This 177-nucleotide RNA was probed chemically with DMS and 2A3. Source: RMDB library TTRDEL, as collected in RNAgym. The RNA was probed in 150 mM KOAc, 10 mM MgCl2 and 150 mM bicine (pH 8.5) at 24 C.

RNA sequence: GGGAACGACUCGAGUAGAGUCGAAAAGAUAUGGAGACAUGCGUUAAGUGGUGAUAUGUUCGGAAACGAACAUGUUUGCCACGAUGACGCAACAGCUCCUAAGUCAAAAGAGCCGUUCGCGGCUCAACAUCGCUUUAUAGUUCGCUAUAAAGCGAUGAAAAGAAACAACAACAACAAC
Reactivity to DMS in 0.01 (KOAc 150mM, MgCl2 10mM, bicine 150mM(pH8.5), 24C), signal-to-noise 7, nucleotides 027 to 126: g000a040u010a300u010g000g000a020g000a040c080a200u000g000c000g000u000u000a140a240g010u000g000g020u000g010a010u000a010u000g000u000u000c000g010g000a090a080a210c000g010a010a000c000a000u000g010u000u000u010g030c000c000a010c000g000a090u010g010a010c000g000c000a010a020c200a140g000c000u000c000c000u000a060a130g010u000c030a080a070a150a140g010a010g010c000c010g030u000u010c200g010c010g010g000c010u000c010a040a150
Reactivity to 2A3 in 0.01 (KOAc 150mM, MgCl2 10mM, bicine 150mM(pH8.5), 24C), signal-to-noise 5, nucleotides 027 to 126: g040a020u100a020u180g010g000a000g020a030c080a120u080g000c010g010u000u010a100a060g010u010g000g010u010g010a010u000a000u020g010u000u010c010g020g000a050a070a070c010g000a000a000c000a000u010g060u030u090u260g010c000c000a000c000g000a010u020g000a000c000g000c000a000a000c020a010g000c000u000c000c000u020a160a030g060u030c040a030a010a050a200g000a000g000c010c010g030u050u070c300g010c040g120g000c010u000c000a000a010